[RMDB]
RNA sequence: GGGAACGACUCGAGUAGAGUCGAAAAUGAUGUCAGAAGCCUCGUCACAGACCAACAGGCCAAAGACACUGAUAGGCCUGAGCCAAAACGGCAAAUGGAUAGGCUACAUCGCUCGCUCGUCGGUGUACGGGGACGUCAAUCCAUCGGGGCACAGUCAGCUGGAUCUUUAGUUCGCUAAAGAUCCAGCAAAAGAAACAACAACAACAAC
Reactivity to 2A3 in 0.01 (KOAc 150mM, MgCl2 10mM, bicine 150mM(pH8.5), 24C), signal-to-noise 1, nucleotides 027 to 156: u150g030a030u060g020u040c060a000g060a130a000g000c040c000u020c040g020u010c040a050c060a030g070a120c060c020a020a060c000a050g020g020c010c000a020a100a060g080a030c090a080c060u040g040a200u060a090g000g010c010c000u010g020a000g000c010c010a040a290a090a000c040g010g000c010a000a000a110u020g000g000a000u010a100g000g010c000u000a040c040a040u090c050g030c040u000c020g070c040u090c050g170u010c030g020g040u000g000u050a030c010g000g000g110g000a060c040g040u070c040a000a010u000c000c000a040u060c030g000g000g000g100c030a020c040a020g100u220c010a000